[RMDB]
RNA sequence: GGGAACGACUCGAGUAGAGUCGAAAAGAUCGGAAACAGCAGCAGGCGAGUCCGCCUUAUGUGAAGGAUCGGCUGAAACACGAGGAAAUACUGAGCCAACGCAAGACGGUAGCCGAACAGUAGCAACAAAACGCUUACGUGUUCGCACGUAAGCGAACCCCCUAGGAGGGUUCGCCCUCCUAGGGGGAAAAGAAACAACAACAACAAC
Reactivity to 2A3 in 0.01 (KOAc 150mM, MgCl2 10mM, bicine 150mM(pH8.5), 24C), signal-to-noise 1, nucleotides 027 to 156: g030a030u070c070g050g000a160a020a000c010a110g040c030a000g050c020a000g000g080c010g030a010g110u030c040c050g000c000c000u050u130a100u030g030u000g030a030a040g050g030a010u140c030g060g000c060u070g000a170a040a000c100a000c100g010a070g030g160a030a150a030u100a080c060u030g030a020g000c010c000a050a020c020g000c020a050a050g000a050c010g000g070u010a000g030c010c010g030a000a010c010a000g070u130a010g090c020a000a110c010a060a100a000a000c000g020c000u000u000a000c000g070u030g000u000u050c130g060c130a000c000g020u000a000a000g000c000g000a000a000

An RNA of 207 nucleotides, treated with 2A3 and read out base by base. The RNA was probed in 150 mM KOAc, 10 mM MgCl2 and 150 mM bicine (pH 8.5) at 24 C. It was measured as part of the RMDB library M2RFPK. The 2A3 profile rests on 541 reads. Reactivities are given for positions 27 through 156.